Structure probing data (2A3 and DMS) for a 177-nucleotide construct.
[RMDB]
RNA sequence: GGGAACGACUCGAGUAGAGUCGAAAAGACGAACGAAAACACAAAUGUUCCACGGUGCAGAAGGGUCCCUCACAUGAGGAUCACCCAUGUAACUCGGACAGGAUAUGCUUAUGGGAAAAAGAGAGAAGUUUAGCGUGUAGUUCGCUACACGCUAAACAAAAGAAACAACAACAACAAC
Reactivity to 2A3 in 0.01 (KOAc 150mM, MgCl2 10mM, bicine 150mM(pH8.5), 24C), signal-to-noise 2, nucleotides 027 to 126: g050a020c060g040a060a040c040g070a030a080a090a000c060a020c010a030a130a100u140g010u090u060c000c020a030c080g030g000u030g000c010a010g010a280a120g000g000g010u040c030c030c000u010c010a170c040a180u300g000a010g040g020a020u070c030a020c000c000c000a010u030g000u000a060a050c010u000c070g010g000a000c010a010g080g010a050u040a010u200g030c030u100u070a030u130g040g000g010a070a070a030a030a000g080a000g010a000g000a150a030
Reactivity to DMS in 0.01 (KOAc 150mM, MgCl2 10mM, bicine 150mM(pH8.5), 24C), signal-to-noise 2, nucleotides 027 to 126: g030a100c060g000a080a110c070g000a090a030a070a060c100a050c100a040a120a130u000g010u020u030c000c010a030c190g000g030u010g000c040a030g000a070a110g030g000g030u010c130c000c020u000c000a170c240a090u000g010a000g000g010a020u000c140a050c000c000c000a130u000g020u010a030a050c040u000c160g000g000a040c070a030g000g010a100u010a000u010g000c040u000u000a060u010g000g010g020a050a030a030a030a060g000a050g000a090g000a080a090